Background
Chemical mapping of a 177-nucleotide RNA with 2A3 and DMS. For DMS, 1,717 sequencing reads were counted.

RNA sequence: GGGAACGACUCGAGUAGAGUCGAAAAGAUAUGGAGUGUCCAUUCGUUCGUUGAAAUAUUAUCGGAAACGAUAAUAUGGAGAACGAUGGAGCACUCCUAAGUCAAAAUCCGGAGUUCGCUCCGGAAACACUGAGUACGAGUUCGCUCGUACUCAGUGAAAAGAAACAACAACAACAAC
Reactivity to 2A3 in 0.01 (KOAc 150mM, MgCl2 10mM, bicine 150mM(pH8.5), 24C), signal-to-noise 2, nucleotides 027 to 126: g040a040u070a060u200g020g000a000g000u020g000u030c020c000a030u290u300c010g010u020u010c020g220u300u070g000a020a000a010u000a000u010u010a010u000c050g030g040a120a040a020c010g010a000u000a010a030u010a010u030g030g000a070g000a030a000c010g000a000u010g000g020a040g050c000a000c000u010c010c000u010a040a020g020u000c010a000a040a040a300u010c010c000g020g000a010g000u110u140c270g020c180u000c000c020g000g000a000a000a000
Reactivity to DMS in 0.01 (KOAc 150mM, MgCl2 10mM, bicine 150mM(pH8.5), 24C), signal-to-noise 2, nucleotides 027 to 126: g020a040u000a300u020g000g000a020g020u000g000u010c000c000a020u020u000c010g030u000u000c000g050u000u020g030a160a110a010u000a020u000u000a010u020c000g000g010a200a100a270c000g020a030u000a000a000u000a000u000g010g000a050g000a000a000c000g010a010u000g000g000a120g020c000a000c000u000c000c000u000a010a060g000u000c020a150a150a130a210u010c010c000g000g000a020g000u000u010c300g030c000u000c000c000g000g000a050a060a140
DMS adducts were read by reverse transcription with MarathonRT. Conditions: 150 mM KOAc, 10 mM MgCl2 and 150 mM bicine (pH 8.5), 24 C. It was measured as part of the RMDB library TTRDES.